[RMDB]
RNA sequence: GGGAACGACUCGAGUAGAGUCGAAAAUCGAACCCAGAGCUAGCUGGUUCUCCCCGAAAUGCGUUGAGGCGCAGCAGUUGACUGGACAUCUAGGGGUAAAGCACUGUUUCGGUGCGGGCCGCGAGAGCGGUACCAAAUCGAGGCAAACUCUGAAUACGGUUAUUUAUUUGUUCGCAAAUAAAUAACCAAAAGAAACAACAACAACAAC
Reactivity to 2A3 in 0.01 (KOAc 150mM, MgCl2 10mM, bicine 150mM(pH8.5), 24C), signal-to-noise 3, nucleotides 027 to 156: u120c010g000a040a030c010c000c010a000g000a010g020c100u150a020g030c020u020g050g070u170u030c050u070c040c020c010c010g040a080a060a080u110g010c040g010u060u130g060a060g120g000c040g000c040a010g040c000a020g030u100u140g080a100c040u070g020g050a030c000a030u040c050u070a050g000g040g000g000u100a080a040a030g060c020a000c080u020g010u030u040u010c010g000g000u000g000c000g010g010g000c000c000g000c010g000a040g000a010g060c000g030g020u050a300c000c000a020a030a000u040c010g000a000g000g020c010a020a070a100c010u030c010u040g050a070a040u140a070c120
Reactivity to DMS in 0.01 (KOAc 150mM, MgCl2 10mM, bicine 150mM(pH8.5), 24C), signal-to-noise 2, nucleotides 027 to 156: u010c070g000a140a300c040c010c000a090g010a140g000c030u000a070g040c060u000g010g000u010u010c040u000c010c010c000c030g000a070a080a080u000g000c050g010u000u000g050a140g000g030c020g040c020a080g030c070a150g040u000u000g020a100c040u010g020g010a090c050a030u000c050u000a290g030g040g020g030u000a040a030a070g010c030a080c140u000g020u000u000u010c010g050g020u000g020c300g020g000g020c000c010g000c010g020a280g010a300g030c010g000g000u000a040c010c000a040a290a030u010c000g010a020g000g000c020a040a090a070c030u000c040u000g010a080a070u000a090c110

The record gives the reactivity of an RNA of 207 nucleotides to 2A3 and DMS. The 2A3 profile rests on 2,621 reads. Reactivities are given for positions 27 through 156. Conditions: 150 mM KOAc, 10 mM MgCl2 and 150 mM bicine (pH 8.5), 24 C.